[RMDB]
RNA sequence: GGGAACGACUCGAGUAGAGUCGAAAAGAAGGAGGUCUGCCCAAUUCCUCAUAUAUCCUUACCACGGCAGACUUCGAAGGGCUUGAGAAUGCGAAAUUGGUGGUAAGGAUAUGUCUCAAGCCUUAGACUACAGGUAUCUAUUCGUAGAUACCUGUAGAAAAGAAACAACAACAACAAC
Reactivity to 2A3 in 0.01 (KOAc 150mM, MgCl2 10mM, bicine 150mM(pH8.5), 24C), signal-to-noise 3, nucleotides 027 to 126: g050a020a040g090g060a040g050g000u000c000u010g010c020c000c000a000a040u040u030c000c010u070c080a010u110a010u030a010u080c000c000u000u000a000c000c000a010c010g010g000c010a000g000a000c000u030u000c000g030a050a020g030g000g000c000u010u000g000a000g000a050a040u080g030c030g060a050a060a100u100u070g170g010u010g000g000u000a010a000g000g000a000u000a010u020g000u000c000u000c000a000a000g000c000c000u010u020a010g010a010
Reactivity to DMS in 0.01 (KOAc 150mM, MgCl2 10mM, bicine 150mM(pH8.5), 24C), signal-to-noise 9, nucleotides 027 to 126: g010a100a150g010g010a130g010g010u000c010u000g000c000c010c220a070a110u000u000c030c030u010c210a100u010a110u000a030u000c000c000u000u000a000c000c000a030c030g010g000c010a020g000a030c030u000u000c020g000a120a180g000g000g010c000u000u000g000a020g000a040a060u000g000c160g000a090a080a080u000u010g010g020u000g010g010u000a010a010g000g000a010u000a010u000g010u000c010u000c000a010a010g000c000c000u000u000a160g000a140
Chemical mapping of a 177-nucleotide RNA with 2A3 and DMS. For DMS the reverse transcriptase was MarathonRT. The DMS profile rests on 17,852 reads.